[RMDB]
RNA sequence: GGGAACGACUCGAGUAGAGUCGAAAAUACCGUCUUCUCCCCGACGGUUUCAAUCAAUAGCUUCACGUUGUGUAGCGUAGGUGGAAGGUAUCGUGUGGUGUAUAAACACCACAUAGUCUCUUAGGGGUCAAGCUGAUAAACUUCGGUUUAUCAGCAAUCCACUCAGUACUUUCGAGUACUGAGUGGAAAAAGAAACAACAACAACAAC
Reactivity to DMS in 0.01 (KOAc 150mM, MgCl2 10mM, bicine 150mM(pH8.5), 24C), signal-to-noise 2, nucleotides 027 to 156: u000a080c000c010g020u010c050u000u000c060u000c000c010c010c090g010a030c030g000g000u000u000u000c060a070a170u000c070a070a160u010a120g000c010u000u000c030a040c040g040u000u000g040u000g050u010a070g000c010g050u000a050g020g020u020g040g040a060a090g000g030u000a060u010c070g000u000g030u000g030g070u000g010u000a130u010a130a080a100c010a020c000c010a020c010a010u000a050g020u000c030u000c020u000u000a170g020g010g000g030u000c040a080a150g000c040u000g000a020u000a030a000a010c010u000u020c300g020g010u000u000u000a010u020c000a000g000c000a010a030
Reactivity to 2A3 in 0.01 (KOAc 150mM, MgCl2 10mM, bicine 150mM(pH8.5), 24C), signal-to-noise 3, nucleotides 027 to 156: u120a000c000c000g020u010c020u230u040c020u100c020c000c000c000g010a010c050g000g000u030u030u070c040a010a040u010c000a010a150u020a090g010c020u090u080c010a020c070g300u300u220g030u040g050u080a020g010c030g010u020a060g060g010u070g050g040a080a020g020g040u070a030u140c040g010u020g000u000g020g000u000g060u010a080u100a250a240a010c010a000c000c000a010c000a000u010a010g010u000c020u000c020u090u160a010g000g000g000g030u040c050a060a060g000c010u000g010a000u000a000a000a010c000u010u060c150g050g000u000u000u000a000u000c010a000g000c000a000a000
Source: RMDB library M2RFPK, as collected in RNAgym. Structure probing data (DMS and 2A3) for a 207-nucleotide construct. Reactivities are rounded to 0.1 and cut off at 0 and 3. DMS (dimethyl sulfate) methylates the pairing face of unpaired adenines and cytosines.